[RMDB]
RNA sequence: GGGAACGACUCGAGUAGAGUCGAAAAUUGAAGACAAGCAAGAACGCGCAAAUUAUGAGAAAUUACAACAAAAAUUUCAAAUGCUGAUGAGCAAACAUCAAGAACAUGUGAGACCACAAUUUGAAUCCCCCAUUUAAUCAUUCGUGAUUAAAUGGGGAAAAGAAACAACAACAACAAC
Reactivity to DMS in 0.01 (KOAc 150mM, MgCl2 10mM, bicine 150mM(pH8.5), 24C), signal-to-noise 2, nucleotides 027 to 126: u000u020g000a100a030g020a110c080a090a060g000c010a110a070g010a110a020c140g050c110g000c050a030a090a080u000u000a030u000g010a290g000a030a010a060u000u000a060c160a070a120c140a020a050a050a050a030u010u010u010c020a090a060a090u000g000c080u000g010a070u000g010a060g080c070a080a070a120c100a020u000c030a020a040g000a020a120c130a080u000g010u000g010a080g000a090c020c000a030c090a030a050u000u000u010g030a070a100u000c120
Reactivity to 2A3 in 0.01 (KOAc 150mM, MgCl2 10mM, bicine 150mM(pH8.5), 24C), signal-to-noise 2, nucleotides 027 to 126: u040u020g020a070a000g070a070c040a080a060g040c030a030a030g050a160a020c030g030c010g010c080a060a070a100u170u090a060u110g050a030g030a070a060a010u140u120a040c040a110a000c030a040a200a080a090a070u050u030u080c030a040a050a020u050g010c020u050g020a070u020g040a000g160c070a100a040a020c010a020u060c030a050a010g030a040a000c020a050u100g000u000g070a020g060a050c030c000a030c040a110a070u020u090u130g060a040a030u050c020

Chemical mapping of a 177-nucleotide RNA with DMS and 2A3.
2A3 adducts were read by reverse transcription with SuperScript II with manganese.
Conditions: 150 mM KOAc, 10 mM MgCl2 and 150 mM bicine (pH 8.5), 24 C.
Values cover nucleotides 27 to 126.
The 2A3 profile rests on 1,602 reads.
It was measured as part of the RMDB library OK2TRN.